[RMDB]
RNA sequence: GGGAACGACUCGAGUAGAGUCGAAAACACGGAAGUCAUUAACCCCCGAGAUACCCUUCACACCGGACUUCUUGUUCAACAGCUCAUCGAUCUCAUCAAUGCUCAUGCCCGCCUGACGGUGCAAGUAUACCCACUACUCAUUCGUGAGUAGUGGGUAAAAAGAAACAACAACAACAAC
Reactivity to DMS in 0.01 (KOAc 150mM, MgCl2 10mM, bicine 150mM(pH8.5), 24C), signal-to-noise 2, nucleotides 027 to 126: c050a060c150g020g000a030a070g000u010c000a100u000u030a110a230c070c010c000c010c060g000a100g000a060u010a090c040c040c010u010u000c070a070c100a080c100c020g010g000a060c000u000u000c020u010u010g020u000u000c070a070a060c140a120g020c030u000c000a030u010c060g000a070u000c020u000c020a050u000c130a130a100u000g010c030u000c010a060u010g000c020c020c050g000c020c050u000g010a080c020g010g070u000g020c030a020a080g010u000a140